[RMDB]
RNA sequence: GGGAACGACUCGAGUAGAGUCGAAAAGUGAAUUGCUUAGUAGUGGGUCUUAUCGUAUACGUAUAAACGGUGUUGCCGCCGAGUUGGGCGGAGCGGUGUAGAAUAUAUGGUAUAUUUACAUAGAGGACUCAUCUAAGAGCUUCGGCUCUUAGAUGAGAAAAGAAACAACAACAACAAC
Reactivity to 2A3 in 0.01 (KOAc 150mM, MgCl2 10mM, bicine 150mM(pH8.5), 24C), signal-to-noise 1, nucleotides 027 to 126: g020u010g040a130a080u260u070g030c080u140u030a040g000u030a030g000u110g000g010g030u000c040u020u000a000u060c020g080u070a090u080a210c070g000u090a010u030a140a060a000c070g000g200u070g020u160u100g030c000c000g000c000c020g030a070g180u160u110g210g020g000c000g000g000a020g000c000g000g040u020g020u070a010g010a070a030u020a020u020a000u210g140g030u070a040u000a020u150u100u020a040c050a070u090a000g090a030g020g020a090
Reactivity to DMS in 0.01 (KOAc 150mM, MgCl2 10mM, bicine 150mM(pH8.5), 24C), signal-to-noise 2, nucleotides 027 to 126: g010u000g030a110a140u010u000g010c010u000u000a090g030u010a060g020u000g000g000g000u000c030u000u010a040u000c100g030u000a050u000a040c090g000u010a080u000a050a100a110c060g000g000u010g020u010u010g030c030c000g000c010c020g000a180g010u030u000g030g000g020c020g010g010a030g000c040g000g000u040g010u000a100g000a060a140u000a010u000a070u020g010g000u010a020u000a030u000u000u000a070c070a130u010a160g020a090g000g000a160

About this RNA:
Chemical mapping of a 177-nucleotide RNA with 2A3 and DMS. 2A3 is a SHAPE reagent: it acylates the 2'-hydroxyl of flexible nucleotides of all four kinds. It was measured as part of the RMDB library OK2TST.